[RMDB]
RNA sequence: GGGAACGACUCGAGUAGAGUCGAAAACUUAGCUGGCAAUAAAACGACCCACCAUAUGAGCAUCAAAAGGCCAGCUCAGCUCAGCUUUGGUUUGCUCAUUCAGAAGCACUGGAAUACGUACUCCGUACAGAUAAGUGAGCUUCGGCUCACUUAUCUGAAAAGAAACAACAACAACAAC
Reactivity to DMS in 0.01 (KOAc 150mM, MgCl2 10mM, bicine 150mM(pH8.5), 24C), signal-to-noise 1, nucleotides 027 to 126: c040u000u000a040g000c000u000g040g000c010a300a080u000a120a070a130a150c150g010a250c060c010c030a030c110c030a040u010a050u020g000a010g000c010a020u000c150a070a040a050a070g040g000c010c040a000g000c000u000c120a020g000c060u000c110a140g000c080u000u000u000g010g000u000u000u010g000c030u010c030a010u000u000c080a080g010a040a030g000c000a030c050u000g000g040a180a060u000a060c070g020u000a070c130u000c010c020g010u000a110
Reactivity to 2A3 in 0.01 (KOAc 150mM, MgCl2 10mM, bicine 150mM(pH8.5), 24C), signal-to-noise 1, nucleotides 027 to 126: c020u000u040a000g000c000u000g020g040c020a050a240u110a260a180a070a090c070g050a070c030c000c010a040c000c020a000u030a060u150g000a000g010c020a000u090c040a090a070a140a040g130g020c040c010a000g000c010u020c010a020g000c030u020c080a040g000c020u060u090u080g050g060u080u090u060g000c000u020c000a060u110u010c080a040g010a130a010g010c020a010c060u140g020g050a110a040u120a080c000g050u040a050c080u020c000c020g020u070a070